Chemical mapping of a 177-nucleotide RNA with DMS and 2A3. DMS adducts were read by reverse transcription with MarathonRT.
RNA sequence: GGGAACGACUCGAGUAGAGUCGAAAAGUAAAUGCGCAAAAGAAGCUCAGUGCAAGAGCAAGACCUAAGUAUAAAAAUACAGCCAUGAGGUCAAACGCGGAACAAAACCGCGAAAUGGCAAAAAAAACAAUAUUAGUUUGUUCGCAAACUAAUAUUGAAAAGAAACAACAACAACAAC
Reactivity to DMS in 0.01 (KOAc 150mM, MgCl2 10mM, bicine 150mM(pH8.5), 24C), signal-to-noise 3, nucleotides 027 to 126: g030u000a060a070a150u000g010c040g030c060a050a060a110a160g000a100a100g020c050u000c040a090g020u000g020c070a050a090g000a090g000c000a120a060g000a080c010c020u010a050a090g010u000a090u000a000a040a070a080a120u020a070c100a120g000c000c020a030u000g010a040g000g010u000c040a020a050a240c040g020c000g010g000a080a110c130a120a060a090a100c000c000g020c000g000a000a050a040u000g000g000c010a000a000a000a020a050a020a090a120
Reactivity to 2A3 in 0.01 (KOAc 150mM, MgCl2 10mM, bicine 150mM(pH8.5), 24C), signal-to-noise 2, nucleotides 027 to 126: g030u050a020a080a100u130g040c060g000c050a040a040a020a100g090a120a030g000c020u040c030a060g030u060g130c030a030a030g000a000g010c030a020a020g020a020c000c000u060a140a000g050u050a080u100a210a200a030a080a020u090a030c010a000g030c020c010a000u050g030a010g030g000u000c000a000a030a000c010g010c000g020g030a080a020c050a080a090a010a010c010c010g000c000g010a100a050a000u010g000g000c000a010a000a010a000a000a000a060a080

Notes
Source: RMDB library M2PK90, as collected in RNAgym. The 2A3 profile rests on 2,713 reads.